Source information: Chemical mapping of a 207-nucleotide RNA with 2A3 and DMS. As a SHAPE reagent, 2A3 marks flexible, mostly unpaired nucleotides at the ribose 2'-OH. For 2A3 the reverse transcriptase was SuperScript II with manganese. For 2A3, 4,448 sequencing reads were counted.
RNA sequence: GGGAACGACUCGAGUAGAGUCGAAAAGGGGUCCCAACAGACUUGUCAGUCACGAUAAGUACACUGAAGCCUCCACGGUGUACUUUUGACGUGACUUGGAUUUAGUCUGGGGACGGAGGCACCCAAAGUUGUUAACUAGUUCGCUAGUUAACAACAACAAUCACGCUUAGUUCGCUAAGCGUGAUUGAAAAGAAACAACAACAACAAC
Reactivity to 2A3 in 0.01 (KOAc 150mM, MgCl2 10mM, bicine 150mM(pH8.5), 24C), signal-to-noise 3, nucleotides 027 to 156: g110g000g040g030u010c010c000c000a040a090c010a010g010a020c020u090u300g020u040c000a000g000u000c010a000c000g070a130u020a070a000g000u000a000c000a000c000u020g050a130a020g020c000c000u000c000c000a000c000g000g000u000g000u010a000c000u020u030u030u140g300a190c010g000u000g000a000c000u020u100g050g010a020u140u140u240a060g000u000c000u000g010g000g010g000a000c040g000g000a010g000g000c000a040c010c010c000a040a070a010g010u000u000g010u000u000a000a000c000u000a000g030u070u060c240g010c160u000a000g000u000u010a000a000c000a000a000c000a000a010
Reactivity to DMS in 0.01 (KOAc 150mM, MgCl2 10mM, bicine 150mM(pH8.5), 24C), signal-to-noise 2, nucleotides 027 to 156: g010g000g010g020u000c010c010c010a030a150c050a050g000a020c000u000u010g000u000c020a070g020u000c010a020c020g020a120u000a070a030g010u000a000c000a040c010u010g010a050a170g000c040c010u020c020c010a300c070g040g000u000g030u000a000c010u000u010u000u000g020a100c070g000u010g000a010c000u000u010g060g020a060u000u000u000a020g020u000c000u010g010g000g000g020a020c030g010g000a040g140g030c020a140c020c000c030a100a120a090g020u000u000g000u000u000a000a040c000u000a020g000u010u000c300g040c000u000a000g020u000u000a010a000c040a000a000c030a130a290

The RNA was probed in 150 mM KOAc, 10 mM MgCl2 and 150 mM bicine (pH 8.5) at 24 C.
The data come from the RNA Mapping Database (RMDB), library RNAMAK.